[RMDB]
RNA sequence: GGGAACGACUCGAGUAGAGUCGAAAAGUUAGCCUUCGGGCUAACAAAAAGAUAUGGAAGUGCUCCCCACCGUAUGAACUACGAAGAUGGUUCGGAAACGAACCAUACUUCGCAUACGAGGCACUUCCUAAGUCAAAAAGAUCACUUCGGUGAUCAACAUUGAACAAUAGUUCGCUAUUGUUCAAUGAAAAGAAACAACAACAACAAC
Reactivity to 2A3 in 0.01 (KOAc 150mM, MgCl2 10mM, bicine 150mM(pH8.5), 24C), signal-to-noise 6, nucleotides 027 to 156: g000u000u000a000g000c010c020u040u080c300g070g000g010c010u010a010a010c010a020a080a020a020a000g110a070u210a040u090g000g000a000a000g000u000g010c000u200c040c020c000c000a020c000c010g010u000a010u010g030a110a110c100u110a060c300g000a000a000g010a000u000g000g000u000u000c010g000g020a060a080a030c010g000a000a000c000c010a000u060a070c000u000u000c000g000c010a000u000a010c000g000a010g010g000c000a000c000u000u000c000c000u000a040a010g060u040c080a040a000a030a080a070g020a000u030c020a000c020u080u140c300g100g000u000g000a000u000c000a010a000
Reactivity to DMS in 0.01 (KOAc 150mM, MgCl2 10mM, bicine 150mM(pH8.5), 24C), signal-to-noise 4, nucleotides 027 to 156: g000u000u000a000g020c000c000u000u000c300g070g020g010c010u000a000a000c010a020a060a060a110a090g010a120u000a140u000g010g010a050a040g000u000g010c010u010c070c040c040c030a300c120c040g030u000a090u000g010a090a240c040u010a070c000g010a020a020g000a080u000g000g000u000u000c030g020g000a150a120a240c020g020a020a020c000c000a010u000a010c000u000u000c010g010c020a040u000a040c030g000a110g020g010c010a020c010u000u000c000c010u000a010a070g010u000c050a030a050a130a160a090g000a020u000c000a010c010u000u010c290g050g020u000g010a020u000c000a050a100